Chemical mapping of a 177-nucleotide RNA with DMS and 2A3.
DMS adducts were read by reverse transcription with MarathonRT.

[RMDB]
RNA sequence: GGGAACGACUCGAGUAGAGUCGAAAAUGAUGGAUUGAGAGAUGAAGGGCGAGAGGUUUGUCCUGGUCCACGCAAGGCAGAUAGGGGAGAUAGUGCUUCUCUUAUGAGAAGGGCGUCGUGAACACAGCUGUCAGUUAAGGUUCGCCUUAACUGACAGAAAAGAAACAACAACAACAAC
Reactivity to DMS in 0.01 (KOAc 150mM, MgCl2 10mM, bicine 150mM(pH8.5), 24C), signal-to-noise 7, nucleotides 027 to 126: u020g000a060u020g010g010a060u000u020g010a100g010a070g000a070u000g010a100a070g000g010g010c060g010a090g000a090g010g000u010u010u010g000u000c020c010u000g010g010u020c040c050a080c090g010c100a060a070g010g010c030a050g010a090u020a060g010g000g000g000a060g010a090u010a060g020u020g010c040u000u000c000u000c010u010u030a080u030g000a020g000a040a020g000g020g000c060g010u000c020g000u000g010a100a070c090a060c190a110g010
Reactivity to 2A3 in 0.01 (KOAc 150mM, MgCl2 10mM, bicine 150mM(pH8.5), 24C), signal-to-noise 6, nucleotides 027 to 126: u130g030a020u050g010g070a030u030u120g040a060g010a010g020a070u100g070a070a070g040g010g010c050g000a050g000a030g070g090u040u080u130g040u060c020c010u020g000g030u040c030c010a050c010g030c020a030a030g030g020c020a020g020a080u120a060g050g010g010g010a040g010a020u110a040g050u040g060c000u020u000c000u000c000u100u230a140u300g010a020g010a030a010g010g010g000c040g000u050c020g030u020g030a030a010c050a000c000a060g050
Conditions: 150 mM KOAc, 10 mM MgCl2 and 150 mM bicine (pH 8.5), 24 C.